[RMDB]
RNA sequence: GGGAACGACUCGAGUAGAGUCGAAAAUCCUGGACAACCUCCCGAUCACCACGUAUGAUCUGGAGGAGAACCCGGAGAGCAUCCGUCCGGGGUACGAGAUCGGCAUCUCCGUGGACGGCAAGUACUAGUAGACGAUCCCAUUCGUGGGAUCGUCUACAAAAGAAACAACAACAACAAC
Reactivity to DMS in 0.01 (KOAc 150mM, MgCl2 10mM, bicine 150mM(pH8.5), 24C), signal-to-noise 1, nucleotides 027 to 126: u000c000c000u000g000g020a140c130a190a240c030c000u000c000c000c060g010a000u000c000a030c050c120a130c300g000u010a130u000g000a030u000c050u000g000g000a020g010g000a100g000a090a060c010c000c000g000g000a070g000a040g020c080a120u040c060c000g010u000c010c010g000g020g040g030u010a000c080g010a140g000a070u000c050g010g000c090a160u010c000u000c000c000g020u000g070g000a020c030g000g010c200a100a050g000u000a140c060u010a080